Description: The data come from the RNA Mapping Database (RMDB), libraries RFM100 and RFMREP. Chemical mapping of a 177-nucleotide RNA with 2A3 and DMS. DMS adducts were read by reverse transcription with MarathonRT. 2A3 adducts were read by reverse transcription with SuperScript II with manganese. In probing experiments dimethyl sulfate is read out at A N1 and C N3, which are open when not base-paired.
[RMDB]
RNA sequence: GGGAACGACUCGAGUAGAGUCGAAAAGGCGUAAUUCUCCCUAUGUAAGCUCCCUUACUAAAAGUAAUACAUAAAGAAUUAUGAAAGUUGGGCAGUAUAAAAAUAAUGACCUGUUGCAAAUAACGGACUUUCAUGCAUUAUUCGUAAUGCAUGAAAGAAAAGAAACAACAACAACAAC
Reactivity to 2A3 in 0.01 (KOAc 150mM, MgCl2 10mM, bicine 150mM(pH8.5), 24C), signal-to-noise 2, nucleotides 027 to 126: g030g000c000g020u020a010a040u020u010c000u020c010c010c000u020a020u030g040u030a050a040g010c000u030c010c010c010u040u070a130c070u180a050a030a130a000g020u010a010a100u030a080c000a010u060a010a300a010g030a070a030u070u020a010u060g040a120a110a030g050u090u030g000g000g000c000a010g030u050a010u160a150a130a030a030a000u300a060a110u100g060a140c000c040u000g030u030u030g000c050a090a010a120u060a100a040c050g020g010a010
Reactivity to DMS in 0.01 (KOAc 150mM, MgCl2 10mM, bicine 150mM(pH8.5), 24C), signal-to-noise 3, nucleotides 027 to 126: g030g000c020g010u000a010a020u000u010c010u000c030c090c040u000a020u020g010u000a030a170g000c050u000c020c020c010u020u000a050c060u010a060a060a080a140g000u000a030a060u010a020c020a020u000a020a090a080g000a060a040u010u000a020u010g000a050a090a080g030u010u000g000g010g010c040a050g000u000a060u010a010a080a070a050a060u020a090a050u010g010a090c150c010u000g000u000u000g010c080a050a090a070u010a030a040c070g010g000a200